[RMDB]
RNA sequence: GGGAACGACUCGAGUAGAGUCGAAAAAGGACCCCUUCAGCGAACAGAACGAUCGCUUCACGCGGUGGGAGCAAGACCAUAGCGAUAGGAAGAGAUGCUAGGAGUUGGUGGCGACCGGAGCGAGGAGCUAAGAAUUCUUCUUCGGAAGAAUUCUUAGAAAAGAAACAACAACAACAAC
Reactivity to 2A3 in 0.01 (KOAc 150mM, MgCl2 10mM, bicine 150mM(pH8.5), 24C), signal-to-noise 2, nucleotides 027 to 126: a010g100g050a050c010c000c010c000u080u070c030a030g010c010g000a060a010c020a100g050a110a050c050g040a050u030c000g000c000u070u080c070a050c050g050c030g040g060u030g060g010g010a100g030c050a050a020g080a070c000c020a030u020a010g010c020g100a070u070a070g080g030a030a040g010a010g000a020u110g020c010u030a020g030g060a140g050u090u050g050g080u030g010g030c020g000a020c040c010g020g020a010g010c020g000a010g020g030a020g010
Reactivity to DMS in 0.01 (KOAc 150mM, MgCl2 10mM, bicine 150mM(pH8.5), 24C), signal-to-noise 3, nucleotides 027 to 126: a070g010g010a200c020c010c020c060u000u000c090a100g020c000g010a070a090c090a120g000a070a080c140g000a040u010c040g020c010u000u000c070a150c090g020c050g010g050u020g010g010g020a090g040c090a120a100g010a100c040c020a080u000a090g000c030g000a120u000a070g010g010a080a080g010a110g000a040u010g010c050u000a070g010g000a110g010u000u000g020g030u010g000g010c040g010a130c040c040g010g020a090g000c020g010a060g010g000a070g010